[RMDB]
RNA sequence: GGGAACGACUCGAGUAGAGUCGAAAAGAUAUGGACGAUAGGUACCGAAAUAUAUGUUCGGAAACGAACAUUUAUUAUAGACAGUACUAUCGUCCUAAGUCAAAACUACACGCUUCGGCGUGUAGAACAAAGAAUUAUCCUUCGGGAUAAUUCUUUGAAAAGAAACAACAACAACAAC
Reactivity to DMS in 0.01 (KOAc 150mM, MgCl2 10mM, bicine 150mM(pH8.5), 24C), signal-to-noise 4, nucleotides 027 to 126: g010a010u000a060u000g000g010a020c000g010a010u000a010g010g000u010a000c010c030g020a120a030a020u000a010u000a000u010g000u000u000c000g020g000a010a000a050c000g010a020a010c000a010u000u000u000a000u000u010a200u010a220g010a220c210a060g000u000a040c000u010a000u000c000g020u010c000c000u000a000a050g000u010c010a130a090a130a230c010u000a000c000a010c000g020c000u000u010c250g020g010c000g020u000g010u000a000g010a110a220
Reactivity to 2A3 in 0.01 (KOAc 150mM, MgCl2 10mM, bicine 150mM(pH8.5), 24C), signal-to-noise 2, nucleotides 027 to 126: g010a020u010a010u070g000g000a000c010g010a020u000a020g290g140u070a020c000c020g020a020a050a000u020a000u000a000u000g000u000u000c000g000g000a020a010a000c010g010a000a000c010a000u040u050u000a000u010u020a120u050a110g170a080c050a050g000u000a000c010u010a010u010c000g020u020c000c000u000a000a000g010u000c000a000a000a080a100c000u000a010c000a000c000g030c010u030u110c300g210g000c000g000u000g000u000a000g000a010a000
An RNA of 177 nucleotides, treated with DMS and 2A3 and read out base by base. The 2A3 profile rests on 6,435 reads. It was measured as part of the RMDB library TTRDES.